Conditions: 150 mM KOAc, 10 mM MgCl2 and 150 mM bicine (pH 8.5), 24 C. Structure probing data (DMS and 2A3) for a 177-nucleotide construct.

RNA sequence: GGGAACGACUCGAGUAGAGUCGAAAAAGAACUAGCGAUUGUAAAAGGCUGUUUGCGCUAAGAUAUGGAAUUAGCGCAAAUUGGUCCGAAUUCCUUGAUAACAUUUCGGACAACCGCGCUAAAACAACGAAAUAGUUAAAUUCGUUUAACUAUUUCGAAAAGAAACAACAACAACAAC
Reactivity to DMS in 0.01 (KOAc 150mM, MgCl2 10mM, bicine 150mM(pH8.5), 24C), signal-to-noise 8, nucleotides 027 to 126: a090g010a130a120c120u010a050g020c010g020a100u010u010g010u010a080a100a130a120g000g000c030u010g010u000u000u000g010c010g020c000u000a010a010g010a140u010a190u010g010g010a100a130u000u000a010g010c000g000c000a000a010a010u000u000g020g000u000c000c000g020a030a050u000u000c070c080u010u010g010a090u010a080a120c160a110u000u000u000c010g010g000a030c010a050a050c040c030g000c010g010c090u000a040a060a080a110c160a070a130
Reactivity to 2A3 in 0.01 (KOAc 150mM, MgCl2 10mM, bicine 150mM(pH8.5), 24C), signal-to-noise 7, nucleotides 027 to 126: a000g040a030a020c020u010a010g000c000g070a080u080u270g080u200a060a080a050a050g050g010c010u010g010u020u010u010g000c000g000c000u010a000a020g030a140u180a170u300g110g030a070a120u010u000a010g000c000g000c010a000a000a010u000u020g020g010u000c000c000g010a000a020u050u040c020c000u050u120g070a040u060a120a040c040a090u040u040u050c000g000g000a000c020a030a040c040c020g030c000g000c020u030a110a120a030a030c040a030a020
High DMS reactivity at an A or C suggests that its Watson-Crick edge is free.